[RMDB]
RNA sequence: GGGAACGACUCGAGUAGAGUCGAAAACUGUCGAGCAAGAAUGAGGAUGCGUUGCGCGGAGUGGUUCAAAGCCUGAAGUCCGCACUCGAGGCAGUGAACGCUGUUCUCCCGCCGGAAGAGUCCGGCGCUGCACGAGGUUGUUCGCAACCUCGUGCAGAAAAGAAACAACAACAACAAC
Reactivity to DMS in 0.01 (KOAc 150mM, MgCl2 10mM, bicine 150mM(pH8.5), 24C), signal-to-noise 1, nucleotides 027 to 126: c050u000g020u000c050g050a110g000c050a080a080g010a140a040u000g000a100g000g000a100u020g030c060g030u000u010g020c070g050c070g030g000a050g010u000g020g020u000u010c200a100a110a090g010c000c030u000g000a050a120g030u020c050c050g030c140a100c020u010c050g020a110g010g010c020a080g000u000g000a050a010c020g040c090u000g020u000u000c030u000c020c130c060g020c000c000g060g010a080a120g010a240g000u000c000c010g020g010c010g000
Reactivity to 2A3 in 0.01 (KOAc 150mM, MgCl2 10mM, bicine 150mM(pH8.5), 24C), signal-to-noise 1, nucleotides 027 to 126: c010u030g010u120c020g050a060g070c060a150a040g050a150a070u190g020a070g110g030a090u100g050c030g000u130u060g000c060g040c000g060g000a030g050u100g000g040u000u150c080a140a100a030g030c070c000u100g130a010a080g090u060c010c010g000c050a050c000u020c020g020a100g000g000c000a040g010u000g080a050a010c090g050c050u000g040u030u030c020u020c000c010c030g000c000c010g030g040a090a100g150a050g300u070c000c000g000g000c000g040
An RNA of 177 nucleotides, treated with DMS and 2A3 and read out base by base. For DMS the reverse transcriptase was MarathonRT. For DMS, 808 sequencing reads were counted. For 2A3, 908 sequencing reads were counted.